[RMDB]
RNA sequence: GGGAACGACUCGAGUAGAGUCGAAAAAACGUUAGGGACUCUGCUGCUGGCGACUGCUAGGCACUGAAUGGUAGGAUCUGUCUGGGAGUAGGAAGUCAUCGUGCUUCUGGCCAGCUGCCCAAGUUGAGCCAUUAUGUAAUUUCGAUUACAUAAUGGCAAAAGAAACAACAACAACAAC
Reactivity to 2A3 in 0.01 (KOAc 150mM, MgCl2 10mM, bicine 150mM(pH8.5), 24C), signal-to-noise 7, nucleotides 027 to 126: a000a000c100g030u110u090a130g040g010g030a030c030u060c090u180g050c020u020g000c000u010g020g040c030g020a020c000u070g060c020u100a010g010g020c020a030c100u080g090a080a080u160g120g080u150a060g050g070a060u040c010u020g020u010c000u010g030g010g020a030g030u160a110g030g060a010a010g020u020c030a160u110c180g070u200g050c000u000u000c000u010g040g000c000c000a010g000c010u020g010c000c000c000a030a030g060u060u080g030a020
Reactivity to DMS in 0.01 (KOAc 150mM, MgCl2 10mM, bicine 150mM(pH8.5), 24C), signal-to-noise 9, nucleotides 027 to 126: a060a040c100g010u010u000a150g020g010g000a090c060u000c090u000g010c040u000g010c010u000g010g010c010g010a100c030u000g010c020u000a020g010g000c010a040c160u010g000a120a090u000g020g020u010a090g010g000a130u000c080u000g010u000c010u000g010g010g000a030g020u000a140g010g000a020a010g010u000c020a130u010c300g010u000g010c010u000u000c010u000g010g010c000c010a010g000c030u000g000c010c030c030a060a100g000u000u010g000a200
This 177-nucleotide RNA was probed chemically with 2A3 and DMS. Reactivities are rounded to 0.1 and cut off at 0 and 3. It was measured as part of the RMDB library OK2TST. For DMS, 18,544 sequencing reads were counted. Conditions: 150 mM KOAc, 10 mM MgCl2 and 150 mM bicine (pH 8.5), 24 C. For 2A3, 12,028 sequencing reads were counted.